[RMDB]
RNA sequence: GGGAACGACUCGAGUAGAGUCGAAAAAGAAAGAGAUCGCAGGUGCGAAAGAGGACGCGUAGGAUCCGAAAUACUCGAAGCAGCUAACCGGAAAACGGAAGGAUCCAUCCCAAAGCGAUCAAAAAAAGAUCUAUACUUUGUUCGCAAAGUAUAGAUCAAAAGAAACAACAACAACAAC
Reactivity to DMS in 0.01 (KOAc 150mM, MgCl2 10mM, bicine 150mM(pH8.5), 24C), signal-to-noise 3, nucleotides 027 to 126: a060g000a060a080a080g000a110g010a010u000c020g040c020a180g000g000u000g010c010g010a070a070a130g030a100g010g020a110c060g030c040g040u000a100g000g050a010u000c010c000g030a100a070a060u000a120c030u000c040g000a120a120g010c120a020g000c070u000a090a070c020c030g000g000a050a050a090a110c040g010g020a090a090g000g010a010u000c020c010a090u010c010c010c000a060a050a170g020c030g010a020u010c010a000a010a040a140a060a070a070
Reactivity to 2A3 in 0.01 (KOAc 150mM, MgCl2 10mM, bicine 150mM(pH8.5), 24C), signal-to-noise 2, nucleotides 027 to 126: a000g070a030a050a000g120a010g000a000u000c000g000c030a040g080g130u100g080c020g020a110a060a030g140a040g090g050a020c010g000c010g070u050a110g000g000a000u000c000c000g020a070a040a030u140a020c020u020c050g080a170a040g010c080a010g010c040u050a040a060c010c000g080g000a110a160a060a060c000g030g000a010a030g030g010a000u000c000c010a040u040c000c030c000a070a000a020g000c010g000a010u000c000a000a110a050a000a000a000a000
Notes:
Structure probing data (DMS and 2A3) for a 177-nucleotide construct. DMS adducts were read by reverse transcription with MarathonRT. As a SHAPE reagent, 2A3 marks flexible, mostly unpaired nucleotides at the ribose 2'-OH. Values cover nucleotides 27 to 126.